Structure probing data (DMS) for a 177-nucleotide construct. The reactions ran in a buffer of 150 mM KOAc, 10 mM MgCl2 and 150 mM bicine (pH 8.5), at 24 C.
RNA sequence: GGGAACGACUCGAGUAGAGUCGAAAAGAUAUGGAGUACUGGAGCUGUAGGACAGCCGAGUCGGAAACGAUAUCUGUCCACAGCGUUGAAAGUACUCCUAAGUCAAAGUGCUGCUUCGGCAGCACAACUGAUGUUACCGCUUCGGCGGUAACAUCAGAAAAGAAACAACAACAACAAC
Reactivity to DMS in 0.01 (KOAc 150mM, MgCl2 10mM, bicine 150mM(pH8.5), 24C), signal-to-noise 1, nucleotides 027 to 126: g000a000u000a300u000g000g000a050g030u000a000c000u010g000g040a060g010c000u010g010u000a190g030g020a040c010a040g000c300c080g020a080g010u000c000g020g020a140a050a140c000g010a000u000a060u000c000u000g000u000c000c020a070c010a000g000c000g020u000u000g000a260a060a080g030u000a000c000u000c000c000u000a010a040g010u010c000a130a180a060g010u000g010c000u000g000c000u000u010c180g000g000c000a010g010c010a010c010a010a030

DMS (dimethyl sulfate) methylates the pairing face of unpaired adenines and cytosines. The DMS profile rests on 656 reads.